[RMDB]
RNA sequence: GGGAACGACUCGAGUAGAGUCGAAAAGUUCGGGAUAUUCAAAGAAAUGUAUUUCUUCGGCGUUCACUUUGUCAGUAACGUUGCCGGCAUAAAAAUCAUUUUCCGAGUACAUUACGAUUAGGUCGUCCAUCAAAGGUAUGUCGGAAUAAAGAUCGCCCACAUGUUUAGAGUUCGCUCUAAACAUGUGAAAAGAAACAACAACAACAAC
Reactivity to DMS in 0.01 (KOAc 150mM, MgCl2 10mM, bicine 150mM(pH8.5), 24C), signal-to-noise 2, nucleotides 027 to 156: g030u010u010c010g010g010g020a110u000a030u000u010c050a080a050a120g010a080a080a070u010g010u000a080u000u000u010c010u000u000c050g030g020c080g060u010u010c120a100c070u030u010u010g010u000c220a140g010u000a060a040c030g000u000u010g020c030c030g060g000c090a180u010a030a070a070a070a090u040c020a170u010u000u000u000c020c030g000a150g000u010a040c010a050u000u000a060c050g010a120u000u000a100g010g020u000c080g020u000c060c050a080u010c060a120a100a160g010g030u000a010u010g020u000c030g020g030a040a030u000a080a060a110g000a080u000c030g060c060c030
Reactivity to 2A3 in 0.01 (KOAc 150mM, MgCl2 10mM, bicine 150mM(pH8.5), 24C), signal-to-noise 5, nucleotides 027 to 156: g030u070u090c050g000g040g040a070u080a090u270u180c090a080a110a100g060a060a130a080u090g030u070a140u040u080u000c030u060u080c020g020g000c010g010u030u040c050a030c090u140u180u170g090u250c040a030g020u030a040a010c010g010u030u020g060c040c010g010g000c020a030u200a130a160a030a020a020u070c010a010u020u080u000u000c000c000g010a010g000u010a000c010a040u090u090a030c050g060a050u060u130a090g150g000u070c020g050u000c070c020a030u050c080a160a050a010g100g000u020a010u040g290u040c000g000g000a020a000u070a030a050a020g020a020u020c020g030c040c000